[RMDB]
RNA sequence: GGGAACGACUCGAGUAGAGUCGAAAACUGCGCUGAGCCCUUCUCCCCCAGCUUGCCUGUGUCCUAGGGAAGUGGAAGGUCAUCCUUCACAGGAUCGUGUGGAAGUCCUGCUCGGGGCGGAAGCAUUAUAAACCUUAGACGUUCGCGUCUAAGGUAACAGUUGGAAAACGUUCGCGUUUUCCAACUGAAAAGAAACAACAACAACAAC
Reactivity to DMS in 0.01 (KOAc 150mM, MgCl2 10mM, bicine 150mM(pH8.5), 24C), signal-to-noise 1, nucleotides 027 to 156: c010u000g000c030g000c010u000g000a160g030c060c050c040u020u000c000u010c090c020c010c020c000a060g020c000u000u010g010c020c000u020g000u010g040u000c140c060u000a120g010g030g000a080a040g010u010g000g010a060a030g010g000u000c090a160u000c020c040u030u000c070a100c050a070g050g000a050u010c090g010u000g060u000g020g010a170a090g000u000c010c010u000g010c060u000c070g000g020g010g010c040g040g000a180a100g000c050a070u000u000a090u000a080a060a110c000c000u000u000a020g000a000c010g040u000u000c300g050c060g020u000c000u000a010a010g020g030u000a000a060
Reactivity to 2A3 in 0.01 (KOAc 150mM, MgCl2 10mM, bicine 150mM(pH8.5), 24C), signal-to-noise 1, nucleotides 027 to 156: c050u140g080c020g000c100u030g050a080g000c060c070c020u030u050c060u100c020c000c000c000c000a000g020c020u000u050g100c030c000u080g020u010g040u140c000c050u030a020g000g010g020a000a050g020u020g010g020a030a090g000g040u100c040a110u130c040c020u020u060c030a010c010a000g020g020a060u070c030g030u050g040u090g170g060a020a000g010u010c030c030u040g070c050u050c070g010g000g060g000c030g020g000a040a000g000c000a020u060u180a080u150a050a180a020c000c000u010u010a000g000a010c020g000u000u180c300g020c010g140u020c000u000a000a000g000g010u010a000a000